Overview: Chemical mapping of a 177-nucleotide RNA with 2A3 and DMS. The reactions ran in a buffer of 150 mM KOAc, 10 mM MgCl2 and 150 mM bicine (pH 8.5), at 24 C. It was measured as part of the RMDB library OK1LIB. For DMS, 4,543 sequencing reads were counted. Values are in units of 0.01, from 0 to 300, in steps of 10.

RNA sequence: GGGAACGACUCGAGUAGAGUCGAAAAUCAGCCAAGUGUCCCUUCGACUACACUUCUCUAAGUGCGGCUCCUCCAUGACCCUCCUAGUAGAUGCCCCUGGAUAUGAUCCUUUAUGGUUCAUCACCUCUACAAAGCCAUCAUUCGUGAUGGCUUUGUAAAAAGAAACAACAACAACAAC
Reactivity to 2A3 in 0.01 (KOAc 150mM, MgCl2 10mM, bicine 150mM(pH8.5), 24C), signal-to-noise 4, nucleotides 027 to 126: u050c020a000g080c010c010a110a040g070u070g090u110c000c010c000u030u080c030g030a040c030u130a010c040a030c050u140u030c050u030c020u140a110a080g040u050g100c030g020g020c010u000c000c000u040c000c000a070u100g090a110c010c000c000u000c010c010u010a050g050u030a020g030a110u110g020c000c000c010c010u040g020g000a020u030a030u070g030a040u060c010c000u040u120u110a170u280g020g010u010u020c010a000u000c010a020c000c020u020c000
Reactivity to DMS in 0.01 (KOAc 150mM, MgCl2 10mM, bicine 150mM(pH8.5), 24C), signal-to-noise 3, nucleotides 027 to 126: u020c060a090g010c050c020a110a070g000u010g000u010c010c030c040u000u000c070g010a080c060u020a080c050a180c020u000u010c080u000c090u030a090a070g030u020g000c080g000g000c040u000c040c000u010c030c040a050u010g000a110c050c020c030u010c010c040u000a040g000u020a120g000a060u010g000c020c010c020c060u020g000g010a120u020a060u010g000a030u010c000c010u000u000u010a070u050g020g000u000u000c020a020u000c180a050c050c000u000c110